[RMDB]
RNA sequence: GGGAACGACUCGAGUAGAGUCGAAAAAUGGCGAAUGCAUGGGGAACUACAUCUGUGUCGCGAGUUCGAUUCUCGCCAGGGCCUGGUCCUGUAGCUCAGUUGGUAGAGCAAGCUGUUCCCCGGACACCAAGGGUACUAGCUUCGGCUAGUACCCUUGAAAAGAAACAACAACAACAAC
Reactivity to DMS in 0.01 (KOAc 150mM, MgCl2 10mM, bicine 150mM(pH8.5), 24C), signal-to-noise 1, nucleotides 027 to 126: a120u010g020g010c050g000a030a060u020g000c050a070u000g010g000g000g000a060a070c070u010a060c250a080u010c080u000g000u000g000u000c020g010c020g000a000g000u020u000c040g000a300u000u020c000u000c000g010c050c000a020g000g000g000c010c180u010g020g000u010c010c010u000g020u000a030g010c020u000c010a130g000u020u000g000g010u000a020g010a010g000c010a240a120g010c220u000g010u000u000c020c000c030c050g010g010a130c150a100c090
Background:
Chemical mapping of a 177-nucleotide RNA with DMS. Values cover nucleotides 27 to 126.